Chemical mapping of a 177-nucleotide RNA with 2A3 and DMS. The reactions ran in a buffer of 150 mM KOAc, 10 mM MgCl2 and 150 mM bicine (pH 8.5), at 24 C. The 2A3 profile rests on 4,080 reads.
[RMDB]
RNA sequence: GGGAACGACUCGAGUAGAGUCGAAAAGUCAGCUUGUUCGCAAGCUGACAAACUGGACACACCCACACCCAGGCGAAGCCGUGUCAAAAAGGGUGUGGGUAAAAAGGACACUGUUCGCAGUGUCCAACCGUAUAAGAGUCUUCGGACUCUUAUACGGAAAAGAAACAACAACAACAAC
Reactivity to 2A3 in 0.01 (KOAc 150mM, MgCl2 10mM, bicine 150mM(pH8.5), 24C), signal-to-noise 3, nucleotides 027 to 126: g020u000c000a000g000c000u030u010g040u090u150c170g040c150a000a010g000c000u010g000a000c000a000a000a000c010u050g170g040a020c010a000c000a020c120c010c000a000c000a000c010c010c010a040g040g000c070g150a130a030g050c070c050g130u110g110u180c100a080a050a030a070a110g010g000g000u000g000u000g010g000g000u000a010a010a000a000a000g010g010a000c000a000c010u020g010u060u040c180g010c110a000g000u000g010u010c000c010a000a010
Reactivity to DMS in 0.01 (KOAc 150mM, MgCl2 10mM, bicine 150mM(pH8.5), 24C), signal-to-noise 3, nucleotides 027 to 126: g000u000c000a000g010c000u010u000g020u000u010c220g020c010a010a020g020c000u000g020a010c000a020a050a070c100u000g010g000a070c130a110c170a070c020c000c000a020c000a010c000c010c000a130g010g000c100g000a050a130g040c050c060g020u010g010u000c130a050a070a140a110a090g000g000g020u000g010u000g000g000g010u000a000a000a030a060a040g000g010a020c000a010c000u000g010u000u010c160g000c000a030g010u000g010u000c000c000a010a020